Chemical mapping of a 307-nucleotide RNA with DMS and 2A3. DMS adducts were read by reverse transcription with MarathonRT. The RNA was probed in 150 mM KOAc, 10 mM MgCl2 and 150 mM bicine (pH 8.5) at 24 C. It was measured as part of the RMDB library POS240.

[RMDB]
RNA sequence: GGGAACGACUCGAGUAGAGUCGAAAAGUUGCUUCUUCGGAAGCAACAACCAUAACGUGAGUUAUGGAACUUGUAACUACGGUUACAAGACAUUGCCGGUGACGGCAAUGAACGGAUCUUCUUCGGAAGAUCCGAAGCUAGACUUCGGUCUAGCAAGAUGCCACUACGGUGGCAUCAGUGUCCUACUACGGUAGGACACAGAGGGAGAGGUGAAGAAUACGACCACCUAGGUACCAUUGCACUCCGGUACCUAAAACAUACCCUCUACAUCGCGCUUCGGCGCGAUGAAAAGAAACAACAACAACAAC
Reactivity to DMS in 0.01 (KOAc 150mM, MgCl2 10mM, bicine 150mM(pH8.5), 24C), signal-to-noise 4, nucleotides 027 to 266: g010u000u000g000c010u000u000c000u000u020c150g020g000a010a000g010c000a010a010c000a140a160c000c000a010u000a000a000c000g000u020g000a250g010u000u000a000u000g010g000a180a300c010u020u000g000u000a010a010c000u000a120c210g040g010u010u010a010c000a020a000g010a210c010a000u000u000g010c010c000g000g000u010g010a070c000g000g000c000a000a000u000g010a300a280c030g000g000a000u000c000u000u000c000u010u030c160g020g000a010a010g000a000u000c000c010g010a050a060g010c000u000a000g000a030c000u000u010c170g030g010u000c000u000a000g000c000a050a020g000a000u000g010c000c000a010c000u000a090c180g050g010u000g000g020c000a000u000c000a040g010u000g000u000c000c010u000a000c000u010a120c200g030g020u000a000g000g000a000c040a000c000a020g000a010g000g010g000a110g000a050g000g010u010g000a040a070g010a240a120u010a050c030g010a180c120c000a020c010c000u000a020g000g000u000a010c000c010a110u000u010g030c140a100c230u000c240c140g000g000u000a000c000c000u000a000a060a260a140c050a020u010a070c000c000c000u000c000u020a300
Reactivity to 2A3 in 0.01 (KOAc 150mM, MgCl2 10mM, bicine 150mM(pH8.5), 24C), signal-to-noise 4, nucleotides 027 to 266: g000u000u000g000c000u000u020c000u030u100c280g110g000a000a000g000c000a000a000c000a000a000c000c000a000u000a000a000c020g070u090g140a120g010u020u000a000u000g000g000a020a050c010u000u000g000u000a000a000c000u020a020c230g140g000u000u000a000c000a000a000g010a020c000a000u000u000g000c000c000g010g010u030g010a030c010g000g000c020a000a000u000g010a090a020c020g000g000a000u000c000u000u000c010u020u040c220g130g000a000a000g000a000u000c000c000g000a030a020g000c000u000a010g000a010c000u030u050c300g100g000u000c000u000a000g000c000a000a020g000a000u000g000c000c000a010c000u060a050c300g130g010u000g000g000c000a000u000c000a000g000u000g000u000c000c000u000a000c000u010a010c230g120g010u000a000g000g000a000c000a000c000a000g000a000g010g010g000a030g000a000g020g000u020g020a080a120g070a230a110u150a130c040g020a020c000c010a000c000c000u000a000g010g000u000a000c010c010a060u110u300g140c110a100c120u120c120c100g000g010u000a000c000c000u010a030a040a010a000c010a000u050a030c000c000c000u000c000u000a010